[RMDB]
RNA sequence: GGGAACGACUCGAGUAGAGUCGAAAACGAUGACUUGUGCAGUGGCCGAGGCGAUCGGAUUGUGAUGUCGCCUGAAAAGGCGGGACCCAACGUCGCGCCUUUCGCCAGAAGAUGGAAAUAUGCGCAAGCUCUUAUCCAGAUUCGUCUGGAUAAGAGCAAAAGAAACAACAACAACAAC
Reactivity to DMS in 0.01 (KOAc 150mM, MgCl2 10mM, bicine 150mM(pH8.5), 24C), signal-to-noise 7, nucleotides 027 to 126: c070g000a090u020g010a180c080u000u010g010u000g000c010a040g010u000g010g010c020c070g010a120g000g000c000g010a010u000c060g010g010a090u010u030g040u010g000a060u010g010u000c000g010c000c000u000g000a070a040a080a010g010g000c000g020g000g010a070c020c070c140a190a130c130g010u000c010g010c000g000c000c010u000u000u000c050g030c000c010a080g000a090a090g000a110u030g010g000a070a060a090u010a070u010g010c020g010c020a020a040
Reactivity to 2A3 in 0.01 (KOAc 150mM, MgCl2 10mM, bicine 150mM(pH8.5), 24C), signal-to-noise 9, nucleotides 027 to 126: c040g100a120u170g060a030c020u010u010g010u020g000c010a040g020u050g080g020c020c030g060a040g000g010c020g010a020u030c020g090g080a140u170u250g060u050g030a050u060g060u120c000g000c000c000u010g010a030a040a000a000g000g000c000g010g030g040a040c020c040c040a050a040c050g020u030c030g000c000g000c050c000u010u010u020c020g000c000c010a040g050a130a030g050a070u220g040g070a050a080a030u220a080u050g000c000g000c010a020a020

Source: RMDB libraries RFM100 and RFMREP, as collected in RNAgym. The record gives the reactivity of an RNA of 177 nucleotides to DMS and 2A3. For 2A3 the reverse transcriptase was SuperScript II with manganese. High 2A3 reactivity points to a flexible backbone, as in loops and unpaired stretches. Values are in units of 0.01, from 0 to 300, in steps of 10. The reactions ran in a buffer of 150 mM KOAc, 10 mM MgCl2 and 150 mM bicine (pH 8.5), at 24 C.